[RMDB]
RNA sequence: GGGAACGACUCGAGUAGAGUCGAAAAGCCGGUGGAUAGAUUUGUAAGUCUGAUAACCACAUUGCGGACAUAAGUCGCAAAGCCGGAGGGAACAUUGCCAGCAAUCGCGCCAUCUUCAUUUUUACCACCAUGUAGGUGCAUUCGUGCACCUACAUGGAAAAGAAACAACAACAACAAC
Reactivity to DMS in 0.01 (KOAc 150mM, MgCl2 10mM, bicine 150mM(pH8.5), 24C), signal-to-noise 2, nucleotides 027 to 126: g020c040c030g020g050u000g010g010a300u000a030g000a040u000u000u000g020u010a130a190g020u020c010u000g000a140u000a050a070c070c080a110c130a160u000u010g010c020g020g000a020c030a090u000a030a030g000u000c020g000c050a080a090a200g000c020c000g010g010a090g000g000g000a040a060c120a080u000u000g000c030c040a050g020c050a050a050u010c100g020c050g000c020c040a050u000c030u000u000c040a030u000u030u000u000u000a230c030c070a150
Reactivity to 2A3 in 0.01 (KOAc 150mM, MgCl2 10mM, bicine 150mM(pH8.5), 24C), signal-to-noise 2, nucleotides 027 to 126: g040c040c060g000g010u080g020g040a140u030a150g070a100u050u040u220g090u200a280a130g050u010c040u020g040a110u070a180a130c000c000a060c070a160u040u290g060c020g050g020a030c010a030u120a180a070g030u030c010g040c240a070a020a010g000c000c040g010g070a010g040g050g020a080a080c000a090u010u100g050c010c000a000g020c070a000a100u060c020g000c030g000c050c000a020u040c000u040u020c000a080u060u030u070u110u100a070c000c050a070